[RMDB]
RNA sequence: GGGAACGACUCGAGUAGAGUCGAAAAGCUGCUCUUCGGGCUCCUGCACGAGCAAGCGGCGAGCCUGCCCAGGUCCAAGCAGGUCAACGGCCAGAUGCGGCUGGGCUUGGGCCGGGUGAUGUACGGAGGGGAUGCUUUGGUUCGCCAAAGCAUUCCCAAAAGAAACAACAACAACAAC
Reactivity to DMS in 0.01 (KOAc 150mM, MgCl2 10mM, bicine 150mM(pH8.5), 24C), signal-to-noise 3, nucleotides 027 to 126: g000c020u000g010c000u000c120u000u000c060g000g000g020c000u000c160c150u010g030c040a070c080g010a070g050c160a180a070g000c030g010g000c060g000a090g010c000c000u010g020c010c010c000a100g030g000u040c010c000a000a010g000c000a240g000g010u040c210a180a260c050g010g000c000c000a120g000a210u070g030c200g000g000c000u010g000g000g000c000u000u020g010g010g000c000c050g000g000g030u010g000a030u030g000u010a100c040g000g000a300
Reactivity to 2A3 in 0.01 (KOAc 150mM, MgCl2 10mM, bicine 150mM(pH8.5), 24C), signal-to-noise 5, nucleotides 027 to 126: g010c010u050g010c000u010c030u140u160c070g030g020g030c020u060c040c090u140g020c030a040c110g120a110g070c040a130a010g000c010g000g010c120g020a010g010c000c010u020g010c000c000c020a110g000g000u000c010c010a010a000g010c010a020g070g100u160c070a110a040c040g020g000c010c010a050g040a300u290g160c120g040g000c000u020g000g070g010c000u010u000g000g000g000c000c000g000g000g010u030g020a080u110g040u070a060c040g030g020a040
Chemical mapping of a 177-nucleotide RNA with DMS and 2A3. For DMS the reverse transcriptase was MarathonRT. 2A3 adducts were read by reverse transcription with SuperScript II with manganese. Source: RMDB library OK1LIB, as collected in RNAgym. The reactions ran in a buffer of 150 mM KOAc, 10 mM MgCl2 and 150 mM bicine (pH 8.5), at 24 C.